[RMDB]
RNA sequence: GGGAACGACUCGAGUAGAGUCGAAAAGUAAUAGAUAGAAGGAUGACGAGAAAGGGUGCGCUGAUAUCCUUUACGAAUGCUAGCAGUAAAUAGAAUAGCGCUCCUAAUACAACUAGCAACAAAAGGAUAAGGUAUCGUGAUGUCAAUCACAUUGCGAAGCAUAUGAUAGCUUCGGCUAUCAUAUGCUAAAAGAAACAACAACAACAAC
Reactivity to 2A3 in 0.01 (KOAc 150mM, MgCl2 10mM, bicine 150mM(pH8.5), 24C), signal-to-noise 6, nucleotides 027 to 156: g010u050a030a180u040a110g050a040u060a040g030a020a000g040g030a030u100g020a050c060g030a040g060a100a090a030g030g010g010u060g010c040g000c010u040g050a060u020a040u140c000c000u010u010u040a080c080g060a130a050u060g000c000u020a000g010c060a010g060u110a070a100a100u110a070g130a100a050u060a070g020c040g000c030u030c040c000u040a080a030u080a020c010a040a030c010u010a000g000c000a000a060c000a040a090a000a000g010g000a010u050a050a070g080g020u080a050u090c020g010u020g010a010u010g030u030c070a060a100u130c010a030c000a010u010u040g010c010g040a030
Reactivity to DMS in 0.01 (KOAc 150mM, MgCl2 10mM, bicine 150mM(pH8.5), 24C), signal-to-noise 3, nucleotides 027 to 156: g010u000a040a140u000a080g010a120u000a060g000a100a080g000g010a090u000g020a150c060g000a140g030a110a070a140g020g030g030u000g010c050g000c010u000g000a180u010a060u000c010c010u000u010u010a150c160g020a090a200u000g000c010u010a000g010c020a130g000u010a050a050a140u000a100g010a130a120u000a080g020c060g000c030u000c010c010u000a090a170u000a120c030a080a050c020u000a020g000c010a040a110c130a060a060a020a030g000g000a060u010a060a190g010g010u010a090u000c010g000u000g000a020u010g010u020c030a070a120u010c110a070c000a040u000u000g000c000g020a080